[RMDB]
RNA sequence: GGGAACGACUCGAGUAGAGUCGAAAAGCCUGGUAUCCGGAGCCAACAGCUGCAGUGAGUACCGAUUCCGUUGCUGACAGGCCGCUGUUGCGAUGCACAAGUGAUUUGCUUGAGUUUGGCCGCAGAACGGCAUGAGGUACUUCGGUACCUCAUGCCGAAAAGAAACAACAACAACAAC
Reactivity to DMS in 0.01 (KOAc 150mM, MgCl2 10mM, bicine 150mM(pH8.5), 24C), signal-to-noise 1, nucleotides 027 to 126: g000c000c030u000g010g000u000a000u000c020c040g000g020a080g070c120c010a040a060c100a080g000c060u030g020c000a140g000u040g000a050g060u000a020c060c000g000a280u070u010c170c110g090u000u010g020c000u020g000a040c010a140g010g020c010c020g000c000u000g010u000u060g000c030g010a070u000g000c060a090c040a170a120g000u010g010a110u000u010u000g000c040u080u000g000a150g020u000u000u000g020g060c000c020g000c120a080g000a030a170
Reactivity to 2A3 in 0.01 (KOAc 150mM, MgCl2 10mM, bicine 150mM(pH8.5), 24C), signal-to-noise 2, nucleotides 027 to 126: g020c020c000u000g060g060u070a080u020c000c010g020g000a020g040c090c000a020a030c000a060g010c000u030g000c000a000g090u010g000a120g030u010a040c030c000g000a050u220u000c070c050g070u030u050g040c020u060g060a040c000a150g080g070c000c000g000c000u000g040u100u020g000c020g040a000u040g070c080a000c000a090a130g000u060g180a300u220u150u210g010c000u000u050g000a000g060u020u040u060g060g010c010c000g010c010a070g000a060a000